[RMDB]
RNA sequence: GGGAACGACUCGAGUAGAGUCGAAAAAUUACGGGCGGCGCAGGUGGAGCUGCGAUCCCUCCGCCCAUCGCGUGCUCUCUCGGUGGCCCAGACGCUGCAAUCGGACAGGCGGGCCACCUGCAACGAAGCGUCUAACUCUAUUCGUAGAGUUAGACGCAAAAGAAACAACAACAACAAC
Reactivity to 2A3 in 0.01 (KOAc 150mM, MgCl2 10mM, bicine 150mM(pH8.5), 24C), signal-to-noise 1, nucleotides 027 to 126: a000u190u170a110c110g010g020g020c070g000g060c020g000c040a000g040g030u110g060g120a120g000c030u000g020c020g010a050u100c010c000c010u000c000c010g000c000c000c000a030u050c010g050c040g020u060g030c010u010c010u040c020u010c170g000g000u000g010g000c030c000c000a060g000a050c200g000c100u020g030c010a070a300u210c060g100g060a060c010a020g000g020c060g000g010g040c010c020a000c000c020u000g000c000a050a040c030g080a100a010
Reactivity to DMS in 0.01 (KOAc 150mM, MgCl2 10mM, bicine 150mM(pH8.5), 24C), signal-to-noise 1, nucleotides 027 to 126: a050u000u000a080c100g050g000g020c050g000g000c090g030c080a070g000g030u000g010g040a120g000c050u000g000c010g020a060u000c010c030c010u010c020c000g000c000c000c040a090u000c080g030c020g000u010g050c010u000c090u000c130u000c130g010g000u000g000g000c030c000c020a200g000a070c050g000c020u000g010c060a150a110u010c210g000g000a270c020a020g000g000c080g000g000g080c000c020a050c030c000u010g040c060a090a100c060g000a090a150
Source information
This 177-nucleotide RNA was probed chemically with 2A3 and DMS. The reactions ran in a buffer of 150 mM KOAc, 10 mM MgCl2 and 150 mM bicine (pH 8.5), at 24 C.